[RMDB]
RNA sequence: GGGAACGACUCGAGUAGAGUCGAAAACCUUCGAAACCGGCGGGUAGAAGGCAGGGUUCAAACCAUUCCAGCCUGCUGCUAACGGUAACAACGUCGGUAGUGAGCGGCUGGGAAAAAAACAAGAUGCGUGCUUACUAAGUUUCGACUUAGUAAGCACAAAAGAAACAACAACAACAAC
Reactivity to 2A3 in 0.01 (KOAc 150mM, MgCl2 10mM, bicine 150mM(pH8.5), 24C), signal-to-noise 4, nucleotides 027 to 126: c000c000u030u050c060g090a080a040a020c030c020g050g000c080g090g010g020u060a050g030a060a020g070g010c030a060g040g000g000u070u130c070a110a090a050c020c040a030u050u010c010c000a000g010c010c020u160g000c000u000g000c000u000a000a060c000g030g060u100a060a130c100a060a040c150g030u030c020g010g000u000a000g010u020g260a030g020c000g000g000c000u000g000g000g030a030a070a000a000a000a000a000c110a030a040g050a030u160g060c020
Reactivity to DMS in 0.01 (KOAc 150mM, MgCl2 10mM, bicine 150mM(pH8.5), 24C), signal-to-noise 3, nucleotides 027 to 126: c000c020u000u010c070g000a090a080a080c070c050g000g010c050g010g000g030u000a100g010a080a080g020g010c050a130g000g000g020u000u000c110a080a050a100c090c050a240u000u000c000c000a010g000c000c010u040g080c010u000g000c020u000a020a020c000g000g000u010a100a130c220a110a060c190g000u000c000g000g000u000a040g040u010g000a030g050c030g000g020c000u010g030g010g010a000a000a060a020a030a020a020c140a060a070g000a130u050g020c130